[RMDB]
RNA sequence: GGGAACGACUCGAGUAGAGUCGAAAAGGGCAUGGCGUAACUGGCGCAGCGUGGUGGAGUAAAUGCCGGUGAUCGCACUGUUGUGCACCAUGGUGUAGAACAUACGCAAGAUGGCUUCCGGCUGGCGCAUUUCACGCGAGUUCGCUCGCGUGAAAUGAAAAGAAACAACAACAACAAC
Reactivity to 2A3 in 0.01 (KOAc 150mM, MgCl2 10mM, bicine 150mM(pH8.5), 24C), signal-to-noise 1, nucleotides 027 to 126: g000g000g010c020a050u080g010g000c020g010u000a020a070c050u070g030g000c050g030c070a010g000c000g050u080g000g080u070g030g080a080g010u120a050a110a090u180g000c020c000g000g030u040g010a070u090c030g000c010a020c040u060g080u190u110g040u020g000c020a000c010c050a110u250g070g010u000g010u060a040g030a110a010c000a060u170a080c060g000c040a020a050g040a110u040g020g010c000u100u070c000c000g000g040c030u030g000g000c020g000
Reactivity to DMS in 0.01 (KOAc 150mM, MgCl2 10mM, bicine 150mM(pH8.5), 24C), signal-to-noise 2, nucleotides 027 to 126: g000g020g020c070a070u000g020g010c060g010u000a070a080c140u000g000g020c080g020c070a080g020c080g010u010g010g010u000g020g010a080g020u000a040a060a080u000g010c030c000g010g000u000g010a110u000c070g020c010a060c150u000g020u000u000g000u000g010c010a050c010c060a070u010g020g020u000g020u000a020g000a030a040c050a040u000a070c050g020c090a120a150g020a170u010g000g000c050u010u010c030c010g000g010c030u000g010g020c050g000